Background: This 207-nucleotide RNA was probed chemically with 2A3. It was measured as part of the RMDB library M2RFPK.
RNA sequence: GGGAACGACUCGAGUAGAGUCGAAAAUACCUUGAGUAUUGCUGAAUUCAGUUUAGCGUGCAUGCUCUUGGCUGUUCUCAUAGUGAUUGUCAAAUUUGGAGUUACUUAUUCGUCAAUUCAAUAUUUAAAAAGGUGCCGAUGUUCGCAUCGGCACCAAGUGAAAAGCUAACUUCGGUUAGCUUUUCACAAAAGAAACAACAACAACAAC
Reactivity to 2A3 in 0.01 (KOAc 150mM, MgCl2 10mM, bicine 150mM(pH8.5), 24C), signal-to-noise 1, nucleotides 027 to 156: u090a030c000c000u030u030g000a000g050u040a060u300u150g010c010u010g040a150a130u180u070c130a120g240u130u200u130a120g110c120g000u080g050c000a020u000g000c000u000c000u000u000g010g000c000u010g020u020u000c030u010c000a000u040a020g200u110g020a030u010u060g000u020c030a000a040a000u090u040u050g130g000a200g140u160u140a080c040u110u000a010u020u050c030g010u010c000a000a000u080u000c010a040a080u060a300u250u230u300a200a090a000a030a010g000g000u000g000c000c000g000a000u000g000u030u020c160g010c150a000u000c000g010g080c010a000c000c000a000a000
Values cover nucleotides 27 to 156. The RNA was probed in 150 mM KOAc, 10 mM MgCl2 and 150 mM bicine (pH 8.5) at 24 C.